RNA sequence: GGGAACGACUCGAGUAGAGUCGAAAAGAUAUGGACUGACUACCCACCCUGGUAGUCCGAAGAACUCGGAAACGAGGGAGGACAAACAGGAGGUCAGUCCUAAGUCAAACAGGAGUUCGCUCCUGAAGUACUAACCCAGGUUCGCCUGGGUUAGUACAAAAGAAACAACAACAACAAC
Reactivity to DMS in 0.01 (KOAc 150mM, MgCl2 10mM, bicine 150mM(pH8.5), 24C), signal-to-noise 2, nucleotides 027 to 126: g010a120u020a120u010g000g000a050c000u000g000a000c000u000a110c070c030c010a300c080c000c020u050g030g020u000a300g000u000c000c000g000a050a120g000a160a130c010u000c000g000g000a040a030a160c000g020a030g000g020g000a140g000g030a030c000a020a120a300c010a010g000g040a140g020g000u000c030a040g000u010c000c000u000a020a060g030u030c130a120a070a150c000a000g010g000a000g070u000u000c100g020c030u000c000c020u000g000a060a120
Reactivity to 2A3 in 0.01 (KOAc 150mM, MgCl2 10mM, bicine 150mM(pH8.5), 24C), signal-to-noise 1, nucleotides 027 to 126: g120a050u200a200u250g000g000a000c000u000g000a000c020u170a270c030c040c000a000c000c000c020u040g040g000u060a020g000u000c000c000g120a110a060g020a010a010c000u020c010g030g010a060a060a030c010g000a000g050g000g000a020g040g010a010c020a010a300a010c020a040g020g010a000g020g010u010c000a000g010u020c000c000u000a010a000g040u030c070a030a060a150c010a010g000g030a010g010u080u220c160g020c180u020c000c000u000g000a020a030
Chemical mapping of a 177-nucleotide RNA with DMS and 2A3. For DMS the reverse transcriptase was MarathonRT. It was measured as part of the RMDB library TTRDEL. The reactions ran in a buffer of 150 mM KOAc, 10 mM MgCl2 and 150 mM bicine (pH 8.5), at 24 C.